[RMDB]
RNA sequence: GGGAACGACUCGAGUAGAGUCGAAAAGAGGACUAUGAAGCACAAUGCGAUAUCUUCUGGUUAUAUGGCGAAUUUGCUUACUGGGCAUGUUUUGGGCUGGUCGGCGUCAGCUAUUUCGGUAUACGAGAUUGGUUUAUAUUUUCGAAUAUAAACCAAUAAAAGAAACAACAACAACAAC
Reactivity to DMS in 0.01 (KOAc 150mM, MgCl2 10mM, bicine 150mM(pH8.5), 24C), signal-to-noise 9, nucleotides 027 to 126: g010a070g010g010a050c090u010a060u020g010a100a100g010c060a090c180a090a100u030g010c030g000a090u000a060u010c030u010u010c030u000g000g000u020u010a060u010a060u020g010g010c040g010a060a090u010u010u010g010c020u000u010a070c090u010g000g000g010c040a050u010g010u000u000u010u010g010g010g010c030u010g000g010u010c040g000g000c040g010u000c070a050g000c070u010a050u010u010u000c030g000g010u010a080u020a090c080g000a080g010
Reactivity to 2A3 in 0.01 (KOAc 150mM, MgCl2 10mM, bicine 150mM(pH8.5), 24C), signal-to-noise 9, nucleotides 027 to 126: g070a020g030g020a010c050u060a060u250g070a080a030g020c030a030c040a140a130u190g030c020g040a020u020a040u080c050u100u010c020u040g020g010u120u030a110u020a050u160g070g000c040g060a100a090u050u050u100g010c010u020u030a090c040u070g030g020g000c020a050u050g060u030u080u090u070g060g010g000c030u030g030g010u030c020g010g010c010g020u020c010a010g000c010u070a100u030u070u040c020g020g020u080a070u030a170c050g010a020g000
An RNA of 177 nucleotides, treated with DMS and 2A3 and read out base by base. DMS adducts were read by reverse transcription with MarathonRT. The RNA was probed in 150 mM KOAc, 10 mM MgCl2 and 150 mM bicine (pH 8.5) at 24 C.